[RMDB]
RNA sequence: GGGAACGACUCGAGUAGAGUCGAAAAGAUGAGCACCGGUGAGAAGAGACUGUCUCGCAGACUAGAAGUCUCUUCUUUUCUGCUUUGAGACUUCUUCUCCGUAGGACUCUUCGGCUCUUCGCGGGUACCCAGCAACCUGCUCCCACGCGGCGAUUGCGAUACUUGACUCGUUCGCGAGUCAAGUAUCAAAAGAAACAACAACAACAAC
Reactivity to 2A3 in 0.01 (KOAc 150mM, MgCl2 10mM, bicine 150mM(pH8.5), 24C), signal-to-noise 2, nucleotides 027 to 156: g130a140u170g010a030g000c150a140c260c040g040g130u300g040a000g000a000a000g010a010g070a080c160u130g030u020c000u000c010g000c000a000g000a000c020u020a000g000a030a020g300u180c120u080c030u270u010c000u020u010u000u000c000u000g000c000u140u140u220g000a000g000a000c000u010u000c000u010u000c000u000c000c000g020u040a020g010g030a080c000u010c000u000u010c000g000g010c000u000c000u010u010c010g010c000g030g000g000u000a010c000c000c010a000g020c000a000a040c000c030u050g030c000u080c030c060c020a060c070g030c020g020g040c070g170a220u020u060g000c010
Notes:
Source: RMDB library VIROID, as collected in RNAgym. An RNA of 207 nucleotides, treated with 2A3 and read out base by base.